RNA sequence: GGGAACGACUCGAGUAGAGUCGAAAAUGUUACAUCUAAGGGUUGUGGCAAUGGUACUAAAUUUUAUGCUAAUGCUGUAUUGAAACAUGUUGGAGACGCUGAUGAUGUUUCUAUUUGGCGUGUCAUGGCUACCUACGCAAAAGACAUAGUAGCCACCUCAAUAGUACGGCUUCGGCCGUACUAUUGAAAAAGAAACAACAACAACAAC
Reactivity to DMS in 0.01 (KOAc 150mM, MgCl2 10mM, bicine 150mM(pH8.5), 24C), signal-to-noise 1, nucleotides 027 to 156: u000g010u000u000a010c010a090u000c070u030a110a080g000g050g000u000u000g030u040g010g030c020a020a060u000g040g030u000a190c020u010a060a050a140u000u000u000u020a100u000g020c000u010a090a040u000g010c030u000g030u030a120u000u000g010a040a050a040c050a030u010g070u010u000g040g010a130g040a100c070g000c000u010g020a090u010g030a070u000g030u020u000u030c070u010a250u010u000u000g000g020c050g010u010g010u000c040a120u000g000g000c010u000a000c130c030u040a080c040g020c080a070a070a130a170g010a060c040a070u000a040g040u000a020g000c000c000a060c100c030
Reactivity to 2A3 in 0.01 (KOAc 150mM, MgCl2 10mM, bicine 150mM(pH8.5), 24C), signal-to-noise 1, nucleotides 027 to 156: u060g000u010u030a000c010a050u060c020u070a040a040g030g020g040u100u060g030u070g030g030c030a000a040u060g000g000u070a120c040u090a000a050a090u200u120u110u140a070u090g060c060u050a080a050u060g040c050u070g040u090a030u110u110g000a000a030a040c070a060u130g020u040u030g060g020a090g000a010c020g010c050u010g040a070u020g010a000u080g070u000u000u000c010u000a070u020u100u010g000g000c000g020u030g020u050c020a080u060g010g010c000u010a020c000c070u090a100c070g010c040a070a210a000a000g060a050c030a040u060a020g000u000a010g010c030c000a000c010c020